Structure probing data (2A3 and DMS) for a 207-nucleotide construct.
The 2A3 profile rests on 15,467 reads.
DMS adducts were read by reverse transcription with MarathonRT.
It was measured as part of the RMDB library RSTRND.
Conditions: 150 mM KOAc, 10 mM MgCl2 and 150 mM bicine (pH 8.5), 24 C.
The DMS profile rests on 5,560 reads.

RNA sequence: GGGAACGACUCGAGUAGAGUCGAAAACUUCGUCAUCAACACACACAGUUUAUAAUAACUGGCAAAUCAAACAAUAAUUUCGCAGUAGCUGCCUAAUCGCACUCUGCAUCGCCUAACAGCAUUUCCUAUGUGCUGUUAACGCGAUUCAACCUUAAUAGUUAGAUAACUUGUUCGCAAGUUAUCUAACAAAAGAAACAACAACAACAAC
Reactivity to 2A3 in 0.01 (KOAc 150mM, MgCl2 10mM, bicine 150mM(pH8.5), 24C), signal-to-noise 9, nucleotides 027 to 156: c020u180u110c050g160u040c030a100u070c050a130a100c030a010c020a000c010a000c010a160g020u040u030u050a300u080a240a110u180a050a020c020u030g030g020c040a060a060a130u120c060a070a070a130c070a050a090u150a160a140u090u220u190c050g000c010a010g020u210a010g030c150u020g000c010c020u080a060a050u140c030g000c010a000c000u010c010u010g000c000a010u000c010g000c000c000u000a000a000c000a000g010c000a000u050u080u190c040c070u180a110u220g010u000g010c000u000g000u000u000a020a010c020g000c000g020a000u040u060c030a040a060c010c000u080u110a100a020u050a160
Reactivity to DMS in 0.01 (KOAc 150mM, MgCl2 10mM, bicine 150mM(pH8.5), 24C), signal-to-noise 3, nucleotides 027 to 156: c090u000u000c060g000u000c060a070u000c030a070a090c060a060c040a090c070a130c000a030g000u000u000u000a140u000a150a130u010a030a030c020u010g000g000c060a050a090a090u000c090a130a120a140c060a070a140u010a080a150u010u000u010c040g040c010a030g020u000a040g050c070u000g070c000c000u020a090a090u010c100g020c010a040c010u000c000u000g010c020a100u000c010g020c010c080u000a010a020c010a010g000c000a010u000u000u030c210c140u000a100u010g030u000g000c000u000g020u010u000a000a030c060g000c030g010a030u000u010c110a060a060c010c060u000u000a040a070u000a140